[RMDB]
RNA sequence: GGGAACGACUCGAGUAGAGUCGAAAACAGACAGUCUUCGGACUGUCUGAAAAAGAUAUGGACCUUGACAACCGAUAAGGAUCGUUCGGAAACGAACGAAUCCUUUUGACGGUUACAAGGUCCUAAGUCAAAAAAGCAAUUGAUUCGUCAAUUGCAAACAUUUUGUCAUCUUCGGAUGACAAAAUGUAAAAGAAACAACAACAACAAC
Reactivity to 2A3 in 0.01 (KOAc 150mM, MgCl2 10mM, bicine 150mM(pH8.5), 24C), signal-to-noise 3, nucleotides 027 to 156: c000a000g010a000c000a000g000u050c010u040u140c250g150g000a000c000u000g000u000c000u000g000a000a000a000a000a020g010a000u010a000u030g000g000a000c000c010u020u040g080a200c130a050a000c020c020g170a170u080a230a000g010g000a000u000c000g000u000u000c010g010g000a000a000a000c010g020a000a000c000g000a000a070u020c000c000u000u000u000u060g100a060c000g000g000u000u000a010c010a000a000g020g010u020c000c000u000a000a000g000u000c000a010a020a020a030a020a030g000c000a000a000u000u000g000a020u050u080c150g060u000c090a000a000u000u000g000c000a030a020
Reactivity to DMS in 0.01 (KOAc 150mM, MgCl2 10mM, bicine 150mM(pH8.5), 24C), signal-to-noise 1, nucleotides 027 to 156: c010a030g010a020c000a010g050u000c010u000u000c300g050g020a040c000u000g020u000c000u010g010a000a040a050a190a120g010a050u000a050u020g000g020a020c000c000u000u000g010a180c040a020a020c040c000g030a060u000a020a010g010g030a080u000c000g020u000u000c010g000g010a020a040a060c000g010a000a000c000g010a030a050u010c000c020u000u000u000u000g030a110c000g040g000u000u000a290c010a040a000g010g030u010c010c010u020a000a070g000u010c000a000a020a050a020a110a300g010c000a000a000u000u000g020a070u010u010c300g020u000c010a010a030u010u010g000c000a040a080
Structure probing data (2A3 and DMS) for a 207-nucleotide construct.
Source: RMDB library RNAMAK, as collected in RNAgym.
The RNA was probed in 150 mM KOAc, 10 mM MgCl2 and 150 mM bicine (pH 8.5) at 24 C.
The 2A3 profile rests on 3,008 reads.
DMS adducts were read by reverse transcription with MarathonRT.